[RMDB]
RNA sequence: GGGAACGACUCGAGUAGAGUCGAAAACGACUUUUUGAUUAAGGAUAGGUUCAGACUUCGCGUGUCCUUUAUGUUUGUGUCUGAAUCGUAAUAAAAUGGUGCCAAAACAAAGGGUGGUCCGAAGCUGCGAUAAGAUUACUUUCGAGUAAUUUUAUCGAAAAGAAACAACAACAACAAC
Reactivity to 2A3 in 0.01 (KOAc 150mM, MgCl2 10mM, bicine 150mM(pH8.5), 24C), signal-to-noise 8, nucleotides 027 to 126: c020g060a050c030u060u040u020u040u130g210a190u080u120a090a040g110g040a050u100a160g040g000u000u010c000a000g000a010c010u100u110c180g000c030g070u070g070u160c050c010u080u130u080a090u090g060u010u110u110g060u010g000u000c010u000g000a010a020u000c020g010u030a030a060u070a120a120a020a030u080g070g010u080g020c000c000a040a050a030a030c020a050a060a000g040g020g010u020g030g010u010c000c010g040a060a020g040c060u080g010
Reactivity to DMS in 0.01 (KOAc 150mM, MgCl2 10mM, bicine 150mM(pH8.5), 24C), signal-to-noise 9, nucleotides 027 to 126: c050g000a080c040u000u010u010u010u010g010a100u030u020a060a170g000g010a110u030a070g010g010u000u000c010a010g000a020c010u010u010c110g010c060g020u010g000u010c070c070u010u030u030a030u020g000u010u000u010g010u020g010u000c010u000g010a020a010u010c020g000u020a060a080u030a050a060a090a060u020g000g030u010g000c030c030a040a080a060a060c090a030a060a050g010g000g010u000g000g000u010c040c020g010a070a080g010c080u010g010
The data come from the RNA Mapping Database (RMDB), library OK1LIB. Structure probing data (2A3 and DMS) for a 177-nucleotide construct. Reactivities are given for positions 27 through 126. For 2A3, 15,442 sequencing reads were counted. 2A3 is a SHAPE reagent: it acylates the 2'-hydroxyl of flexible nucleotides of all four kinds.